[RMDB]
Chemical mapping of a 177-nucleotide RNA with 2A3 and DMS. In probing experiments dimethyl sulfate is read out at A N1 and C N3, which are open when not base-paired. For DMS, 15,644 sequencing reads were counted. For 2A3, 9,954 sequencing reads were counted. DMS adducts were read by reverse transcription with MarathonRT.
RNA sequence: GGGAACGACUCGAGUAGAGUCGAAAAUUUAUUUGUAUCAUUAUAAGUUGACGCAUAUGAACUAUCGACGGACGUGUAGUUAUAUCCUUUAGCAGUCAAUGCAGAUUGCUGAUUAUCGAUUGUCACGAGUUUAUAUUCUGUUCGCAGAAUAUAAACUAAAAGAAACAACAACAACAAC
Reactivity to 2A3 in 0.01 (KOAc 150mM, MgCl2 10mM, bicine 150mM(pH8.5), 24C), signal-to-noise 7, nucleotides 027 to 126: u020u020u010a030u020u040u030g010u010a030u020c010a000u010u230a130u100a300a100g100u030u030g010a000c010g000c020a000u020a020u070g020a030a010c010u010a020u060c020g010a020c020g050g060a010c030g080u090g030u070a000g000u010u010a090u020a030u110c010c000u020u040u020a000g000c010a000g010u020c030a070a130u270g080c020a040g020a040u020u000g000c010u020g020a080u070u110a060u160c090g080a110u050u120g070u070c060a030c110g050
Reactivity to DMS in 0.01 (KOAc 150mM, MgCl2 10mM, bicine 150mM(pH8.5), 24C), signal-to-noise 9, nucleotides 027 to 126: u000u000u000a010u010u000u010g000u000a090u000c010a040u010u010a180u010a100a150g010u000u000g010a030c030g010c020a010u000a030u010g000a020a030c030u000a220u000c030g010a040c040g020g010a060c040g010u000g020u010a040g010u000u000a080u000a140u000c030c020u000u000u000a030g010c010a010g000u000c020a100a110u010g020c260a100g000a030u000u000g000c010u000g000a050u010u010a090u000c100g010a110u000u000g010u000c100a080c150g000